[RMDB]
RNA sequence: GGGAACGACUCGAGUAGAGUCGAAAAACAAGUGACUUGGGGCCACUGUCCUUUGAGAUUUCUUGUCUGUGGCCAUUGAUAAGAAGACGACACAAUGAGGAAAGUCCUCAUCCACAAUGGCCCUGGUGGGGGACCUGUCCUCUUGGCUGUCACACCACCAGUAUCGAGGUUUCGACCUCGAUACUGGAAAAGAAACAACAACAACAAC
Reactivity to 2A3 in 0.01 (KOAc 150mM, MgCl2 10mM, bicine 150mM(pH8.5), 24C), signal-to-noise 1, nucleotides 027 to 156: a000c100a080a080g040u090g030a080c030u060u180g040g000g000g020c020c020a030c040u100g050u110c010c000u120u170u140g160a160g010a060u070u230u110c030u000u100g030u070c040u030g030u060g080g000c000c020a040u060u110g000a050u100a080a010g080a030a000g040a050c060g080a030c000a000c000a020a060u270g000a010g000g000a000a120a080g000u010c010c000u000c040a070u050c000c010a040c030a150a190u130g070g010c000c040c010u000g000g030u130g000g000g000g000g070a010c000c020u100g080u050c000c000u020c000u040u000g000g000c000u010g000u090c000a010c010a020c030c000a090